[RMDB]
RNA sequence: GGGAACGACUCGAGUAGAGUCGAAAAACAACUACGUGUUCCCGAAGCGCGCCGUGAUCGCUCCCUUCUUCCAGCUGACCGUCGCCAGCAUGACGUUCUUCUGUCUGAUUAACUACACCAAGUUGAAAACUAUCUGAGACUUCGGUCUCAGAUAGUUAAAAGAAACAACAACAACAAC
Reactivity to 2A3 in 0.01 (KOAc 150mM, MgCl2 10mM, bicine 150mM(pH8.5), 24C), signal-to-noise 5, nucleotides 027 to 126: a000c050a020a040c040u130a040c060g080u050g030u060u030c020c000c000g020a090a030g040c030g000c010g000c020c010g020u030g010a100u070c030g000c040u030c010c020c000u060u070c000u060u010c010c000a020g010c010u050g020a060c030c000g050u040c010g030c030c000a010g040c020a040u120g040a030c030g040u010u030c030u040u000c010u030g100u030c020u030g060a110u110u060a070a070c030u070a040c080a010c080c020a100a040g000u030u010g080a090a060
Reactivity to DMS in 0.01 (KOAc 150mM, MgCl2 10mM, bicine 150mM(pH8.5), 24C), signal-to-noise 3, nucleotides 027 to 126: a050c060a120a090c100u010a060c150g000u010g010u020u000c010c000c000g000a150a080g000c090g000c070g010c020c030g000u000g010a070u010c050g000c040u000c010c020c030u000u030c040u010u000c020c030a100g000c060u010g000a070c050c030g030u000c030g020c060c010a040g000c040a050u070g000a070c080g010u010u020c030u010u000c060u000g030u010c030u000g000a150u020u010a040a030c070u010a100c130a100c070c060a030a070g020u000u000g000a050a090